[RMDB]
RNA sequence: GGGAACGACUCGAGUAGAGUCGAAAAACUCGUGGCAGUUCGCUGCCACGAGUCAUACGUUUCAAUGCUUGUUCUAAUGCAUUAUGCUCUUUUACAUCUCGGCAUAGCACAUUCGUGUGCUAUGCAAGUAAUCUCACGAGUUCGCUCGUGAGAUUACAAAAGAAACAACAACAACAAC
Reactivity to DMS in 0.01 (KOAc 150mM, MgCl2 10mM, bicine 150mM(pH8.5), 24C), signal-to-noise 1, nucleotides 027 to 126: a060c020u000c000g050u000g010g000c000a000g040u010u000c260g010c000u000g000c000c000a000c000g000a020g020u010c060a050u020a100c110g010u000u000u000c110a060a050u000g000c030u000u000g010u000u000c130u000a080a050u000g000c000a050u010u000a110u000g010c070u010c010u000u010u000u010a110c190a120u000c050u000c090g030g030c020a000u000a000g000c000a020c000a030u000u000c180g010u000g020u000g000c020u000a000u000g020c000a000a060
Reactivity to 2A3 in 0.01 (KOAc 150mM, MgCl2 10mM, bicine 150mM(pH8.5), 24C), signal-to-noise 2, nucleotides 027 to 126: a010c000u000c000g000u000g000g030c000a020g040u060u080c100g090c100u000g000c010c000a010c010g010a000g010u000c000a010u080a020c060g070u000u000u050c080a060a030u040g020c000u110u120g090u230u130c070u220a120a020u100g020c000a010u000u010a080u210g080c040u090c020u090u110u050u080a110c080a160u070c020u020c110g060g000c000a010u000a000g010c000a000c000a020u020u080c220g090u040g000u000g000c020u000a000u000g000c000a000a000